[RMDB]
RNA sequence: GGGAACGACUCGAGUAGAGUCGAAAAGCCUUUUGAGUGGGAAGGUUAAACUCUAGAACUGUCACAGUGGUAGCCUUGAGCUGUGAUGGAUUUUAAAGGCUACUGAUAUCCAAAGCCUGCCCAUGGGCGUUGGGUUGAGGGAAUUUUUAAAACAUGGCAUUAGGCAUGCCUUCGGGCAUGCCUAAUGAAAAGAAACAACAACAACAAC
Reactivity to 2A3 in 0.01 (KOAc 150mM, MgCl2 10mM, bicine 150mM(pH8.5), 24C), signal-to-noise 1, nucleotides 027 to 156: g070c000c000u000u000u000u000g000a000g010u010g040g040g040a300a090g020g000u040u230a010a020a000c000u000c000u000a010g000a050a020c000u010g000u000c000a010c000a010g020u030g060g060u000a000g000c000c000u020u000g000a000g000c000u000g010u000g000a000u000g000g000a020u070u090u090u300a030a010a020g000g010c010u020a000c000u000g010a000u000a000u030c000c000a020a000a000g000c000c000u040g030c030c010c000a000u000g000g000g010c000g000u000u010g000g000g000u010u020g010a020g000g020g120a000a010u170u060u010u070u150a000a000a000a000c000a000u000g000g000
Structure probing data (2A3) for a 207-nucleotide construct. For 2A3 the reverse transcriptase was SuperScript II with manganese. It was measured as part of the RMDB library ARCHII.